Structure probing data (2A3) for a 207-nucleotide construct. For 2A3 the reverse transcriptase was SuperScript II with manganese. Values cover nucleotides 27 to 156. The reactions ran in a buffer of 150 mM KOAc, 10 mM MgCl2 and 150 mM bicine (pH 8.5), at 24 C.
[RMDB]
RNA sequence: GGGAACGACUCGAGUAGAGUCGAAAAGCGCCGCGGAUCACUGGCGUGCCGGCUCGGAAACAGGAGUUCCGACUCCUUCCUUUCUCUGCCGCGCCUCCACAUCCGAUCGUCGCUUCUCCUUUCGGACCUGAAAGAAACUACCCGGUGGAUACAACUCGUUUUAUUGCUGGUUCGCCAGCAAUAAAACAAAAGAAACAACAACAACAAC
Reactivity to 2A3 in 0.01 (KOAc 150mM, MgCl2 10mM, bicine 150mM(pH8.5), 24C), signal-to-noise 1, nucleotides 027 to 156: g000c000g040c040c000g000c000g000g000a000u000c000a000c090u000g010g000c030g090u070g030c030c000g000g000c000u010c040g030g040a050a060a040c300a300g000g020a000g000u140u180c040c030g120a120c000u000c000c000u000u020c000c000u010u010u020c010u000c010u030g000c000c010g050c140g000c000c000u040c000c030a030c040a020u000c000c020g010a290u120c000g010u010c000g000c000u000u020c020u010c040c070u030u070u110c060g080g050a090c020c060u100g030a050a120a020g050a060a170a040c020u100a030c020c000c050g060g110u070g060g000a040u130a160c090a090a070c110u060c110